[RMDB]
Conditions: 150 mM KOAc, 10 mM MgCl2 and 150 mM bicine (pH 8.5), 24 C. This 207-nucleotide RNA was probed chemically with 2A3. Reactivities are given for positions 27 through 156. Source: RMDB library OK3TST, as collected in RNAgym.

RNA sequence: GGGAACGACUCGAGUAGAGUCGAAAAAGGUUCAGGCAAGAAAAACAGAAGUCCAAACCAAGCUAAUGUUUUAUAUGCAUUUAUUUCCUCUCUCAUUCCUAACAAAAUGUUAUUUCAUUUACUUGACGAGGAUUUCUCGUUAUUUCAUUUACUUGAAUCUCCUUGGUACUUUCGAGUACCAAGGAGAAAAAGAAACAACAACAACAAC
Reactivity to 2A3 in 0.01 (KOAc 150mM, MgCl2 10mM, bicine 150mM(pH8.5), 24C), signal-to-noise 1, nucleotides 027 to 156: a000g080g010u020u030c020a020g040g000c020a030a130g050a090a090a010a000a000c000a010g010a040a000g000u000c000c000a000a060a030c010c010a020a020g000c020u050a060a020u020g070u010u140u070u080a070u030a070u230g000c000a000u010u060u030a110u140u160u130c040c080u120c010u010c000u000c040a130u270u180c040c040u100a130a030c040a060a090a010a020u040g000u050u060a070u040u050u060c000a010u000u000u070a000c000u020u030g010a040c010g010a020g010g000a050u020u020u030c000u020c020g050u000u020a130u190u040u060c010a010u020u070u200a090c030u040u030g050a040a010